[RMDB]
RNA sequence: GGGAACGACUCGAGUAGAGUCGAAAAGGGCGGCGCAGAGCCUUGCUUGGGGAGAGGCUCUCGGACAGUCGGGGUUGCUGCGGGCCCGAGCCGGGUAGGGUCGCGCUCAGAGCUGUGCGCCCUGCCUUAUUUAUUUAAAGUUCGCUUUAAAUAAAUAAAAAGAAACAACAACAACAAC
Reactivity to 2A3 in 0.01 (KOAc 150mM, MgCl2 10mM, bicine 150mM(pH8.5), 24C), signal-to-noise 9, nucleotides 027 to 126: g010g010g010c070g020g150c000g010c010a000g000a010g010c000c000u000u010g010c020u080u090g030g010g080g010a100g010a070g160g110c030u020c010u010c040g090g110a030c030a030g040u180c050g020g010g010g010u060u140g070c000u010g000c000g010g020g000c000c000c000g000a010g020c010c020g010g000g000u010a010g020g010g050u300c060g000c000g000c010u040c070a110g030a040g130c110u050g010u010g010c000g000c000c000c000u010g000c000c000u000
Reactivity to DMS in 0.01 (KOAc 150mM, MgCl2 10mM, bicine 150mM(pH8.5), 24C), signal-to-noise 8, nucleotides 027 to 126: g000g000g010c010g010g010c000g020c020a010g010a070g000c000c000u000u000g000c040u010u000g010g010g020g010a100g010a140g010g010c110u000c000u000c030g010g020a300c080a020g000u010c030g020g010g000g010u000u010g010c010u000g000c010g010g000g010c010c000c000g010a070g000c030c030g000g000g010u000a010g000g000g010u030c030g020c010g000c010u010c100a170g010a140g020c150u000g010u000g010c000g010c000c000c000u000g000c000c000u000